Description
Conditions: 150 mM KOAc, 10 mM MgCl2 and 150 mM bicine (pH 8.5), 24 C. Chemical mapping of a 177-nucleotide RNA with 2A3. 2A3 adducts were read by reverse transcription with SuperScript II with manganese.
RNA sequence: GGGAACGACUCGAGUAGAGUCGAAAAUAUUGCGGCAGAUACGCUGCCAUCCCGAAAGUAGAUCAGCGGGAUGACAGCGUAUUUGUCAGCCUGAAAGAUGACCCGUAUAACUAAAAAGGCCGCUCUGAUCGGGUAGUGUCUUCGGACACUACCCGAUAAAAGAAACAACAACAACAAC
Reactivity to 2A3 in 0.01 (KOAc 150mM, MgCl2 10mM, bicine 150mM(pH8.5), 24C), signal-to-noise 1, nucleotides 027 to 126: u290a090u100u240g070c040g040g000c050a010g000a000u000a000c000g000c000u000g000c000c000a020u000c000c000c000g000a090a170a000g260u300a000g040a140u280c070a020g060c000g050g000g000a000u000g000a000c000a000g000c000g000u000a000u000u000u000g000u000c000a000g000c000c010u020g010a000a000a190g100a110u150g000a070c010c000c010g070u260a220u120a300a170c100u210a030a030a030a030a020g060g000c070c000g060c000u030c010u090g010